[RMDB]
RNA sequence: GGGAACGACUCGAGUAGAGUCGAAAAAGCGUGGACUACGGUCCACGCACAUACGAGGUUACGUCAUACGAAGAAUUGGUAUGUUAAGUUUUACCAGUUCAUCGUCUGACGUUUAACUUCCUAUGAAUGCCAUACAGAAGUUCGCUUCUGUAUGGCAAAAAGAAACAACAACAACAAC
Reactivity to DMS in 0.01 (KOAc 150mM, MgCl2 10mM, bicine 150mM(pH8.5), 24C), signal-to-noise 2, nucleotides 027 to 126: a040g030c000g000u000g000g070a030c000u000a110c210g010g020u000c000c000a000c040g000c000a040c000a000u000a000c300g000a000g000g020u000u000a020c000g000u000c020a010u000a000c000g030a020a070g010a000a000u000u000g010g000u000a010u000g010u040u040a090a180g010u020u020u000u000a000c000c000a000g000u000u000c000a090u000c000g000u000c050u000g000a020c010g000u000u000u020a000a000c000u000u000c000c060u000a040u000g030a120a110
Reactivity to 2A3 in 0.01 (KOAc 150mM, MgCl2 10mM, bicine 150mM(pH8.5), 24C), signal-to-noise 3, nucleotides 027 to 126: a000g000c000g020u040g000g000a010c000u040a030c270g060g010u000c000c000a000c000g000c000a000c000a000u010a010c000g000a000g010g000u010u010a000c010g010u000c000a000u010a030c000g010a030a010g000a010a000u000u000g020g030u020a060u060g140u190u150a210a160g100u130u110u040u030a000c000c000a000g000u000u000c010a020u000c030g000u010c010u000g000a010c000g000u000u000u010a000a000c000u000u010c000c000u040a050u020g120a060a080